[RMDB]
RNA sequence: GGGAACGACUCGAGUAGAGUCGAAAACUCUUUAAAGGAGGCUGGUAACGCGUCGAUACAAGAGAUAUUGCUCUAUAAACAGUAACGUCGUUAUCUGUCAUGCCACCGAGGGUUAGCGGUCAUGGUUCAAAUCCAAUUGGUUCGCCAAUUGGAUUUGAAAAGAAACAACAACAACAAC
Reactivity to DMS in 0.01 (KOAc 150mM, MgCl2 10mM, bicine 150mM(pH8.5), 24C), signal-to-noise 3, nucleotides 027 to 126: c010u000c010u000u020u030a070a080a090g000g000a060g000g030c020u000g020g010u000a010a040c000g000c030g010u000c050g020a150u060a060c170a070a030g000a050g010a210u040a100u010u020g000c020u000c020u010a060u050a150a110a130c150a160g000u020a120a030c000g020u030c030g030u000u000a010u010c000u000g000u010c040a030u050g000c030c010a070c060c080g000a030g010g000g020u000u010a090g000c130g010g000u010c130a030u010g010g020u000u000
Reactivity to 2A3 in 0.01 (KOAc 150mM, MgCl2 10mM, bicine 150mM(pH8.5), 24C), signal-to-noise 5, nucleotides 027 to 126: c000u000c000u020u040u070a130a060a010g040g010a050g010g000c000u020g000g020u010a010a010c010g020c000g010u080c090g030a040u030a150c080a080a000g020a000g010a010u040a120u270u260g080c000u000c010u030a100u110a130a120a040c080a060g090u100a060a020c010g070u120c010g000u150u000a010u000c010u010g010u000c020a030u210g030c000c010a020c010c000g000a040g000g030g040u050u040a010g050c040g030g040u080c070a120u100g130g000u020u020